Source information: This 177-nucleotide RNA was probed chemically with DMS and 2A3.

RNA sequence: GGGAACGACUCGAGUAGAGUCGAAAAGGAGGUCCCGAGGAGUAUCCAAGCAAAGAAGGGGAAGGAUCUCGAGGAAGACAUCUCCCAAGAAGAAGCGGGAACAAUCUCAAGAAGAGGAGGAUUCCCCGGUUUACAAGUAGUUCGCUACUUGUAAACCAAAAGAAACAACAACAACAAC
Reactivity to DMS in 0.01 (KOAc 150mM, MgCl2 10mM, bicine 150mM(pH8.5), 24C), signal-to-noise 1, nucleotides 027 to 126: g000g050a110g000g060u000c010c030c000g010a050g050g010a060g000u000a040u010c000c020a070a140g040c160a090a060a010g030a110a110g000g000g010g030a150a160g000g000a040u000c000u000c030g000a170g060g000a100a050g020a010c120a070u010c100u000c000c000c010a040a020g000a120a090g000a080a070g010c100g030g030g000a040a030c070a140a150u000c060u000c030a030a090g000a120a080g020a050g000g000a000g000g010a230u000u000c080c000c000c080
Reactivity to 2A3 in 0.01 (KOAc 150mM, MgCl2 10mM, bicine 150mM(pH8.5), 24C), signal-to-noise 1, nucleotides 027 to 126: g040g020a010g000g000u010c030c000c000g040a070g040g030a020g010u120a020u020c030c020a020a060g020c040a140a030a130g150a120a050g010g020g020g020a010a060g030g000a000u010c010u010c000g000a050g000g020a060a090g040a020c010a080u020c030u010c030c010c000a000a030g050a020a000g050a050a010g070c090g090g000g000a000a020c010a010a040u040c020u010c050a060a120g100a070a020g010a090g070g040a050g000g040a090u020u020c000c000c000c000

The DMS profile rests on 587 reads. The reactions ran in a buffer of 150 mM KOAc, 10 mM MgCl2 and 150 mM bicine (pH 8.5), at 24 C. DMS adducts were read by reverse transcription with MarathonRT. The data come from the RNA Mapping Database (RMDB), library 15KREP. 2A3 is a SHAPE reagent: it acylates the 2'-hydroxyl of flexible nucleotides of all four kinds. The 2A3 profile rests on 1,340 reads.